[RMDB]
RNA sequence: GGGAACGACUCGAGUAGAGUCGAAAAGAUAUGGAAUUGUCUCGAUGGUCUGCGAAGAAAACUAAGCUGAAUCUCGGAAACGAGAUUCAGCUUAGUUUUUGGAGACCACGAGAGCAAUUCCUAAGUCCAGCACUUAUUACUUCGGUAAUAAGUGCUGAAAAGAAACAACAACAACAAC
Reactivity to DMS in 0.01 (KOAc 150mM, MgCl2 10mM, bicine 150mM(pH8.5), 24C), signal-to-noise 1, nucleotides 027 to 126: g010a090u000a300u000g000g010a000a000u000u000g020u000c000u000c000g020a170u000g050g020u000c010u010g010c290g020a210a240g000a020a000a000a000c000u000a010a010g030c000u020g000a000a010u000c000u000c000g000g000a110a080a260c000g020a000g020a020u000u020c000a000g000c000u010u010a000g000u000u000u000u010u000g010g000a000g000a010c000c020a010c010g000a010g000a050g010c000a010a000u000u000c000c000u000a030a100g000u010c050
This 177-nucleotide RNA was probed chemically with DMS. Values cover nucleotides 27 to 126. For DMS the reverse transcriptase was MarathonRT.